Record summary: The record gives the reactivity of an RNA of 207 nucleotides to 2A3 and DMS. For 2A3 the reverse transcriptase was SuperScript II with manganese. The data come from the RNA Mapping Database (RMDB), library RNAMAK.
[RMDB]
RNA sequence: GGGAACGACUCGAGUAGAGUCGAAAACCUGGAGAUUCGUCUCCAGGCGGAUAUCCUAAGUCAGGUACGUUUGACGUGGAGCUGUACUCGGAAACGAGUAUACAGCGAUGAAACCGAGUACCUGAUAUGGAAAUAUAGUGAGGAUUCGUCCUCACAACAUGACAAUAAGGUUCGCCUUAUUGUCAUGAAAAGAAACAACAACAACAAC
Reactivity to 2A3 in 0.01 (KOAc 150mM, MgCl2 10mM, bicine 150mM(pH8.5), 24C), signal-to-noise 8, nucleotides 027 to 156: c000c000u000g020g000a010g000a010u080u160c200g100u010c110u000c010c000a000g010g010c020g030g040a100u100a080u190c010c010u060a180a020g020u000c000a000g000g020u010a020c040g050u080u270u280g110a070c060g000u020g000g040a020g000c000u000g000u000a000c000u010c000g000g030a060a110a060c000g010a010g000u020a050u030a020c000a010g030c020g010a150u040g010a010a010a010c010c010g000a010g000u000a000c000c000u000g000a000u000a030u030g010g090a030a140a010u300a030u110a130g010u000g000a000g010g010a010u030u060c240g060u040c070c000u000c000a010c000a000a010
Reactivity to DMS in 0.01 (KOAc 150mM, MgCl2 10mM, bicine 150mM(pH8.5), 24C), signal-to-noise 4, nucleotides 027 to 156: c000c020u010g000g010a050g010a040u000u000c250g030u000c000u000c000c000a040g000g000c000g000g010a300u000a050u000c000c010u010a040a300g000u000c010a020g010g030u000a020c030g020u000u000u000g030a160c170g010u000g010g010a260g010c000u010g010u000a050c010u000c000g020g020a170a140a290c010g010a010g010u010a110u000a040c020a040g000c000g000a060u010g020a160a120a100c020c020g000a140g010u000a000c000c000u000g020a010u000a160u000g000g000a060a110a140u000a130u000a100g010u000g000a040g000g000a080u000u000c100g000u000c000c000u000c000a010c000a010a220
For 2A3, 11,094 sequencing reads were counted. The RNA was probed in 150 mM KOAc, 10 mM MgCl2 and 150 mM bicine (pH 8.5) at 24 C.